[RMDB]
RNA sequence: GGGAACGACUCGAGUAGAGUCGAAAAUGCAUGCAAGAGCGCUCGCGUCGAUCCGCUGGAAAUCGGCUACGUCGAGGCCCACGGGACCGGAACGUCGUUAGGGGAUAGGAUCGAGGCGCACGCCUUACGACUCCCUGCCAUUCGUGGCAGGGAGUCGAAAAGAAACAACAACAACAAC
Reactivity to 2A3 in 0.01 (KOAc 150mM, MgCl2 10mM, bicine 150mM(pH8.5), 24C), signal-to-noise 2, nucleotides 027 to 126: u130g030c070a030u080g010c030a040a030g010a070g070c000g040c090u020c000g020c000g300u000c000g000a000u000c000c020g050c060u040g070g120a090a040a040u120c000g010g000c000u000a000c020g010u020c030g050a040g000g050c000c000c000a090c250g000g000g060a090c010c000g030g020a040a020c060g030u020c050g020u100u250a290g020g060g000g080a140u060a120g060g000a000u000c000g010a020g000g000c000g000c010a000c020g070c000c010u060u010a030
The data come from the RNA Mapping Database (RMDB), library OK1LIB. An RNA of 177 nucleotides, treated with 2A3 and read out base by base. The 2A3 profile rests on 848 reads.